[RMDB]
RNA sequence: GGGAACGACUCGAGUAGAGUCGAAAAAUGAAGAUGGAGACUGAUCAGUAUGCAGAGAAGUGUAUCUGUCCUUCACUUAUGGAACCUGAUUUUAUAUCAUAUGAUGACUAAUAGCAUUAUUCUCACAGUGUGAUUUUGGAGGAUCAGUGAGUAACUAAAGCGAACAAUCGUUCGCGAUUGUUCGCUUAAAAGAAACAACAACAACAAC
Reactivity to 2A3 in 0.01 (KOAc 150mM, MgCl2 10mM, bicine 150mM(pH8.5), 24C), signal-to-noise 2, nucleotides 027 to 156: a000u110g030a000a040g060a070u080g040g000a000g030a050c080u090g010a020u030c020a000g030u050a060u140g020c020a000g020a000g000a230a100g060u030g000u070a100u050c090u060g020u030c000c000u010u000c000a010c040u050u070a030u080g090g070a030a040c010c010u010g030a050u060u050u080u060a240u010a020u100c030a030u130a050u300g080a020u030g050a040c020u040a050a060u050a040g030c030a020u000u050a100u180u040c030u060c010a040c010a030g130u100g000u000g200a050u000u030u120u170g040g000a040g000g020a010u000c010a000g060u020g070a020g000u060a040a000c060u150a090
Reactivity to DMS in 0.01 (KOAc 150mM, MgCl2 10mM, bicine 150mM(pH8.5), 24C), signal-to-noise 2, nucleotides 027 to 156: a080u020g000a060a110g010a100u000g040g000a070g000a070c010u000g000a160u010c070a170g050u010a100u000g020c050a130g010a130g000a090a130g030u010g010u000a150u000c030u000g010u010c020c050u000u000c000a030c070u010u030a140u000g010g010a080a100c070c030u010g010a120u020u010u010u000a140u000a090u040c030a040u000a060u010g010a170u000g000a110c020u000a050a120u020a100g020c060a300u000u000a100u000u000c010u000c010a040c010a170g060u020g000u000g000a100u000u010u000u010g020g000a090g050g020a070u000c030a040g000u010g000a130g020u000a030a160c090u000a070